This 177-nucleotide RNA was probed chemically with 2A3 and DMS. Reactivities are given for positions 27 through 126. The RNA was probed in 150 mM KOAc, 10 mM MgCl2 and 150 mM bicine (pH 8.5) at 24 C.
RNA sequence: GGGAACGACUCGAGUAGAGUCGAAAACACAAGGGUUUGUGGUGGUCAAUGGCAAAGUUUCUACACUUGUCAAACAAGUGUUAGACUUGCUUAAUAAGGGUAUGCAACUUUUGCAUACAAAGGUCUCACUCAUUUAUCCGUUCGCGGAUAAAUGAGUAAAAGAAACAACAACAACAAC
Reactivity to 2A3 in 0.01 (KOAc 150mM, MgCl2 10mM, bicine 150mM(pH8.5), 24C), signal-to-noise 1, nucleotides 027 to 126: c060a000c000a000a040g120g010g060u070u040u040g020u060g010g020u040g000g000u030c030a020a110u090g000g040c010a060a120a040g000u040u110u000c020u010a000c010a010c000u000u010g000u040c020a060a110a080c000a000a010g000u010g000u000u000a000g000a000c000u010u010g000c000u000u100a090a030u190a130a070g130g030g010u020a000u010g000c010a000a090c060u140u150u150u060g000c010a010u000a030c070a020a080a000g040g000u000c030u000c060
Reactivity to DMS in 0.01 (KOAc 150mM, MgCl2 10mM, bicine 150mM(pH8.5), 24C), signal-to-noise 2, nucleotides 027 to 126: c020a070c110a100a110g030g010g000u000u000u000g020u010g010g030u000g000g010u000c070a070a080u000g000g020c010a010a050a030g020u000u000u010c060u000a020c010a000c000u000u000g020u000c300a080a100a300c000a000a000g020u000g020u010u000a030g000a030c050u000u000g010c010u010u010a100a050u010a080a070g000g000g000u000a000u000g010c030a020a130c270u000u000u000u000g020c000a030u000a050c030a040a090a040g010g000u010c070u000c140
It was measured as part of the RMDB library 15KREP. For 2A3, 1,012 sequencing reads were counted. The DMS profile rests on 1,849 reads.